[RMDB]
RNA sequence: GGGAACGACUCGAGUAGAGUCGAAAAGAUAUGGAAUCCUGGGAGCAUCGAUCUAUGGUGCAUGGCACGUGGUCGGAAACGACCACGUGUCUGUGAUGCCAUAGGGAGCUCAAGGAUUCCUAAGUCACUUGAGUACAUGGUUCGCCAUGUACUCAAGAAAAGAAACAACAACAACAAC
Reactivity to DMS in 0.01 (KOAc 150mM, MgCl2 10mM, bicine 150mM(pH8.5), 24C), signal-to-noise 2, nucleotides 027 to 126: g000a050u000a300u010g000g000a020a000u000c000c000u000g010g010g020a020g000c000a300u000c230g010a060u030c010u010a000u000g010g020u000g010c090a040u010g000g010c010a000c000g050u030g020g010u000c020g020g010a050a110a170c000g020a020c000c000a000c000g030u000g000u000c000u020g050u000g020a170u010g020c010c000a000u000a000g000g000g000a010g010c000u000c020a210a020g000g000a010u000u000c000c000u000a010a080g010u000c030a280
Reactivity to 2A3 in 0.01 (KOAc 150mM, MgCl2 10mM, bicine 150mM(pH8.5), 24C), signal-to-noise 2, nucleotides 027 to 126: g000a000u050a020u130g000g010a010a020u000c020c020u260g290g300g060a020g000c010a070u300c090g060a030u010c070u020a040u010g000g000u060g100c170a180u130g000g000c000a010c000g020u000g030g000u040c010g050g000a040a040a080c030g000a010c020c010a000c000g010u000g000u010c000u000g000u000g010a200u040g040c010c000a020u000a000g010g060g000a000g040c030u010c000a000a000g020g000a030u000u030c000c000u000a030a000g040u000c020a020